[RMDB]
The data come from the RNA Mapping Database (RMDB), library OK2TRN. Chemical mapping of a 177-nucleotide RNA with 2A3 and DMS. The 2A3 profile rests on 4,066 reads. For DMS the reverse transcriptase was MarathonRT. Values cover nucleotides 27 to 126. For DMS, 5,890 sequencing reads were counted.
RNA sequence: GGGAACGACUCGAGUAGAGUCGAAAAGUCCAACCCGGUAUAGCCUCCGAGUUAGUGAUCCCUAGCGAGCGCUUGCACUAUCGUAAUCAGGGUUGGCGCUCAGUUGAGACCUCUGGCGUUGCUGAGGGCAUACGUGGAAAUUCGUUUCCACGUAUGCAAAAGAAACAACAACAACAAC
Reactivity to 2A3 in 0.01 (KOAc 150mM, MgCl2 10mM, bicine 150mM(pH8.5), 24C), signal-to-noise 3, nucleotides 027 to 126: g040u000c010c010a000a020c020c000c010g010g000u120a090u130a120g040c020c020u000c020c030g010a020g090u050u090a060g000u090g080a070u040c020c020c010u030a030g050c020g100a020g020c040g010c030u030u060g030c030a030c030u110a090u180c110g180u170a100a140u150c080a060g000g050g000u010u000g000g000c000g010c000u040c020a040g020u100u120g080a070g030a050c000c010u000c040u080g030g000c080g140u100u140g000c040u030g000a060g000g030
Reactivity to DMS in 0.01 (KOAc 150mM, MgCl2 10mM, bicine 150mM(pH8.5), 24C), signal-to-noise 4, nucleotides 027 to 126: g020u000c030c030a050a090c020c010c000g010g010u010a070u010a130g010c070c030u000c030c040g000a070g000u010u010a080g020u000g010a080u000c030c020c020u000a080g020c110g000a030g000c050g020c020u000u010g010c010a040c030u000a070u010c200g010u010a100a100u010c110a080g020g000g020u000u010g010g000c040g000c000u000c020a070g000u000u000g020a090g000a170c020c010u000c050u010g010g010c060g010u010u000g010c030u000g000a050g010g010